Source information: This 177-nucleotide RNA was probed chemically with DMS and 2A3. The data come from the RNA Mapping Database (RMDB), library OK1LIB. DMS adducts were read by reverse transcription with MarathonRT.
[RMDB]
RNA sequence: GGGAACGACUCGAGUAGAGUCGAAAAACAUCUGGGAGUUCGGCACCACCGGCUGUUUGGGCAGCUCUCUCCCAUACUUCCUUGGCGACCUCCAGUGCUCCAUCCAACCUUCCCCUCGCCACGGGACGUUGGGGUCAAAAUUCGUUUUGACCCCAACAAAAGAAACAACAACAACAAC
Reactivity to DMS in 0.01 (KOAc 150mM, MgCl2 10mM, bicine 150mM(pH8.5), 24C), signal-to-noise 2, nucleotides 027 to 126: a060c080a050u030c070u010g000g000g010a050g020u000u040c170g000g000c030a060c070c010a070c100c060g000g000c040u000g000u000u020u000g000g000g000c070a100g000c070u000c040u000c040u020c000c010c020a060u070a030c120u000u000c030c010u000u010g000g050c000g000a160c060c020u000c010c040a030g000u030g000c030u000c000c040a030u040c070c000a120a080c130c060u020u010c020c000c030c040u000c040g020c030c030a060c110g000g010g000a060c300
Reactivity to 2A3 in 0.01 (KOAc 150mM, MgCl2 10mM, bicine 150mM(pH8.5), 24C), signal-to-noise 5, nucleotides 027 to 126: a000c030a070u030c040u040g000g020g020a040g030u090u070c030g060g010c040a040c030c020a070c030c030g050g000c050u040g050u080u110u080g090g050g000c040a040g010c000u010c010u000c020u020c040c010c000a010u030a040c040u040u040c020c000u020u060g050g010c020g020a070c000c020u020c020c010a030g030u010g060c000u000c010c000a070u050c020c010a040a090c020c000u060u070c010c000c000c000u030c020g000c000c020a040c030g030g020g010a020c070